[RMDB]
RNA sequence: GGGAACGACUCGAGUAGAGUCGAAAAACAUUUGCAGCAUUCACGAAUCUACGCUUUAUCAAUACCAACUGCAGCACAAAUGGCAACAAUUAUGUUUGGUAACUUCACUGUGCAAUUGAAGAACAACCCAAGGGAGGAGGUUCGCCUCCUCCCUUGGAAAAGAAACAACAACAACAAC
Reactivity to DMS in 0.01 (KOAc 150mM, MgCl2 10mM, bicine 150mM(pH8.5), 24C), signal-to-noise 1, nucleotides 027 to 126: a040c040a030u030u030u000g010c060a080g000c090a110u010u030c040a000c090g000a010a000u000c020u050a170c070g000c070u000u010u000a020u010c130a050a140u010a110c080c060a050a090c110u030g000c040a040g000c060a020c170a030a020a060u000g000g000c010a050a000c080a120a050u000u030a000u000g000u000u020u010g000g000u000a030a050c040u000u000c030a070c120u000g000u000g000c100a000a070u000u000g020a070a010g000a150a110c200a140a110c150
Reactivity to 2A3 in 0.01 (KOAc 150mM, MgCl2 10mM, bicine 150mM(pH8.5), 24C), signal-to-noise 3, nucleotides 027 to 126: a000c020a110u060u070u170g010c010a010g000c010a010u040u100c060a020c070g040a030a090u030c070u200a040c050g000c080u140u100u090a130u090c060a060a100u100a130c000c000a010a030c010u030g040c040a030g020c050a020c010a050a130a020u060g030g000c000a010a100c030a090a160u140u050a090u190g070u030u080u050g000g010u030a050a060c020u020u010c060a020c110u120g000u030g110c040a060a100u080u060g030a050a010g020a120a020c020a050a010c030